[RMDB]
RNA sequence: GGGAACGACUCGAGUAGAGUCGAAAAACUGGAGGAUACAUUACAGGCAGCAAUUACAUUACACUCCAGGCUGCCACAUUAUCUGGCGAGAGCCAGUAUUACAGAUAGCAUGCGUAGGGAGGGACCAAGCAGGGAGGGAGGAGCAUGCGCUUGGGCACCUAAUAUGCCUGUUCGCAGGCAUAUUAGGAAAAGAAACAACAACAACAAC
Reactivity to 2A3 in 0.01 (KOAc 150mM, MgCl2 10mM, bicine 150mM(pH8.5), 24C), signal-to-noise 2, nucleotides 027 to 156: a000c000u000g000g000a030g050g010a060u120a160c060a080u150u180a110c090a090g000g000c000a000g020c010a020a060u080u010a060c080a070u070u090a060c030a010c070u010c010c000a020g020g010c010u030g000c040c000a000c000a050u160u260a150u060c000u010g000g010c020g010a020g020a010g030c000c000a000g020u020a020u020u040a000c000a010g050a060u040a070g000c050a050u010g030c010g040u020a100g000g000g050a100g000g000g000a020c010c030a090a000g070c060a070g020g030g100a110g020g010g000a060g010g030a020g040c020a010u040g000c000g000c000u040u030g000g030g000c010a000
This 207-nucleotide RNA was probed chemically with 2A3.
The RNA was probed in 150 mM KOAc, 10 mM MgCl2 and 150 mM bicine (pH 8.5) at 24 C.
Source: RMDB library OK3TST, as collected in RNAgym.
High 2A3 reactivity points to a flexible backbone, as in loops and unpaired stretches.